[RMDB]
The data come from the RNA Mapping Database (RMDB), library OK2TST.
The record gives the reactivity of an RNA of 177 nucleotides to 2A3 and DMS.
For DMS the reverse transcriptase was MarathonRT.
The 2A3 profile rests on 1,045 reads.
The DMS profile rests on 1,802 reads.
RNA sequence: GGGAACGACUCGAGUAGAGUCGAAAAGUAAUACCUGGCAUGCCAGUCAGGGAGAUUAUGAUUUCUCGCAUGAAGUGAAAGAAGCGAUGUCCGGUUGCCUGGCGUGUAAAGCUUGCUCGACGCAAUGCUACCCACUUGCAUUCGUGCAAGUGGGUAGAAAAGAAACAACAACAACAAC
Reactivity to 2A3 in 0.01 (KOAc 150mM, MgCl2 10mM, bicine 150mM(pH8.5), 24C), signal-to-noise 2, nucleotides 027 to 126: g050u040a060a100u040a210c000c010u010g060g010c010a010u100g160c040c010a000g020u000c050a020g000g070g000a030g000a000u090u160a030u110g220a200u000u040u010c020u020c040g000c090a090u190g200a280a030g020u040g050a180a020a030g040a090a000g070c100g060a000u050g100u080c000c070g080g060u090u050g010c000c000u000g040g020c010g010u010g010u010a100a140a000g030c000u020u010g000c000u010c110g110a060c050g000c050a030a100u180g040
Reactivity to DMS in 0.01 (KOAc 150mM, MgCl2 10mM, bicine 150mM(pH8.5), 24C), signal-to-noise 2, nucleotides 027 to 126: g000u000a070a080u000a190c060c000u000g000g030c000a050u010g020c100c090a050g010u000c000a040g020g010g000a050g000a040u000u000a060u000g010a170u000u000u000c010u000c030g030c110a110u000g000a140a150g010u000g000a110a030a060g000a070a050g000c070g010a060u010g030u010c030c010g010g010u000u000g010c180c040u000g000g010c040g050u020g030u030a040a050a110g010c050u010u000g010c010u010c140g000a110c170g020c080a080a050u000g010